[RMDB]
RNA sequence: GGGAACGACUCGAGUAGAGUCGAAAAUAAAUCACUAGUAUCACAAAUAAAGCGACUUAAAUUCGAUUCGUUAAUAAUAGAUAAUGCAAAUUUAAGUAGCCCUUAUUUGAUGGGGGAAAGUGAUGAGAGCAUGGAAAACAUUCGUGUUUUCCAUGCUAAAAGAAACAACAACAACAAC
Reactivity to DMS in 0.01 (KOAc 150mM, MgCl2 10mM, bicine 150mM(pH8.5), 24C), signal-to-noise 2, nucleotides 027 to 126: u020a070a080a050u000c010a000c000u000a060g010u100a080u000c040a050c000a060a010a020u020a010a090a110g000c050g010a010c010u000u000a000a030a030u020u000c000g010a150u000u000c180g000u000u010a040a070u060a080a070u030a090g020a060u000a070a000u010g020c160a110a020a050u000u000u020a040a020g010u000a050g000c030c050c200u000u010a000u000u020u000g000a060u000g050g000g000g000g010a040a050a010g000u000g000a000u040g000a150g020
Reactivity to 2A3 in 0.01 (KOAc 150mM, MgCl2 10mM, bicine 150mM(pH8.5), 24C), signal-to-noise 4, nucleotides 027 to 126: u220a010a100a000u000c000a010c020u020a040g110u120a040u060c000a010c010a020a010a000u020a000a050a010g000c010g040a020c010u000u030a010a000a020u060u020c090g090a060u080u040c020g100u080u100a100a020u130a260a040u080a190g110a060u130a120a050u100g080c060a020a020a020u010u000u020a010a010g000u000a000g000c000c020c060u020u040a120u030u000u030g230a300u060g020g010g000g040g040a220a030a000g020u000g000a000u010g010a040g000